[RMDB]
RNA sequence: GGGAACGACUCGAGUAGAGUCGAAAAUGUCCCUCCAUGGUGAGCUCCAGGACCCCCAAAAGGAGGGGGGUGGGCCUUGGACCUCCAGGAGCCAUGGGAUCCGUGGAGUACCCGGGAUAUCCCUUCUCCUACAAAAUUAGUUCGCUAAUUUUGUAGGAAAAGAAACAACAACAACAAC
Reactivity to DMS in 0.01 (KOAc 150mM, MgCl2 10mM, bicine 150mM(pH8.5), 24C), signal-to-noise 1, nucleotides 027 to 126: u000g020u000c010c000c000u020c010c000a020u000g010g020u000g010a130g020c100u000c010c010a050g010g030a130c000c010c010c000c050a010a090a130a110g020g010a060g000g010g000g020g010g040u000g020g010g040c050c040u000u000g010g000a070c120c080u000c020c120a060g010g010a090g010c020c090a050u010g010g020g000a060u030c020c010g000u010g000g000a090g020u000a100c050c040c140g010g020g000a050u000a110u010c050c020c000u000u020c050u000
Reactivity to 2A3 in 0.01 (KOAc 150mM, MgCl2 10mM, bicine 150mM(pH8.5), 24C), signal-to-noise 3, nucleotides 027 to 126: u100g010u010c000c000c010u000c010c010a060u030g010g020u040g050a070g030c030u000c010c000a070g010g050a100c010c000c000c010c020a060a070a060a050g200g030a080g030g000g010g000g020g020u050g030g030g050c020c020u010u090g000g100a090c000c010u030c020c010a010g010g030a050g000c030c010a070u090g040g000g030a030u000c010c010g050u050g020g010a050g050u090a080c020c020c020g000g000g000a030u020a080u110c010c000c040u030u030c020u000
Conditions: 150 mM KOAc, 10 mM MgCl2 and 150 mM bicine (pH 8.5), 24 C. Structure probing data (DMS and 2A3) for a 177-nucleotide construct. For DMS, 927 sequencing reads were counted. Values cover nucleotides 27 to 126. It was measured as part of the RMDB library 15KREP. The 2A3 profile rests on 3,333 reads.